The data come from the RNA Mapping Database (RMDB), library M2PK90.
This 177-nucleotide RNA was probed chemically with 2A3 and DMS.
In probing experiments dimethyl sulfate is read out at A N1 and C N3, which are open when not base-paired.
DMS adducts were read by reverse transcription with MarathonRT.
RNA sequence: GGGAACGACUCGAGUAGAGUCGAAAAUACACUUUACGUGUGCUGGUUUGAUUACUUUGUCCCAAACCAGGCACGCGUAAUUAAAGGCCAGUUUGGCCAGGUCCGCGUUAUCGAUGGUCACCAAUAAUACGAUAUUUCACUUCGGUGAAAUAUCGUAAAAAGAAACAACAACAACAAC
Reactivity to 2A3 in 0.01 (KOAc 150mM, MgCl2 10mM, bicine 150mM(pH8.5), 24C), signal-to-noise 2, nucleotides 027 to 126: u090a020c050a010c040u030u010u020a010c010g000u000g000u000g010c020u010g000g010u000u000u010g030a110u050u140a120c170u110u150u300g180u270c020c010c000a000a000a000c010c000a080g040g030c000a000c010g000c000g000u010a000a000u010u080a060a050a010g010g000c020c000a090g090u110u140u120g020g000c010c000a020g020g010u000c010c010g020c020g000u050u060a140u140c030g020a100u140g000g000u010c020a020c040c030a070a030u170a120a020
Reactivity to DMS in 0.01 (KOAc 150mM, MgCl2 10mM, bicine 150mM(pH8.5), 24C), signal-to-noise 3, nucleotides 027 to 126: u020a090c100a140c120u000u000u000a000c000g010u000g030u000g000c010u000g000g000u000u000u000g010a110u010u010a070c190u010u000u000g020u020c300c170c020a010a000a000c000c010a010g040g020c020a010c010g020c000g010u000a000a010u000u000a050a100a110g020g010c010c010a120g010u000u000u010g020g030c020c000a020g020g000u000c020c050g030c060g000u010u010a050u000c060g020a050u000g010g010u000c060a150c070c030a080a110u000a030a140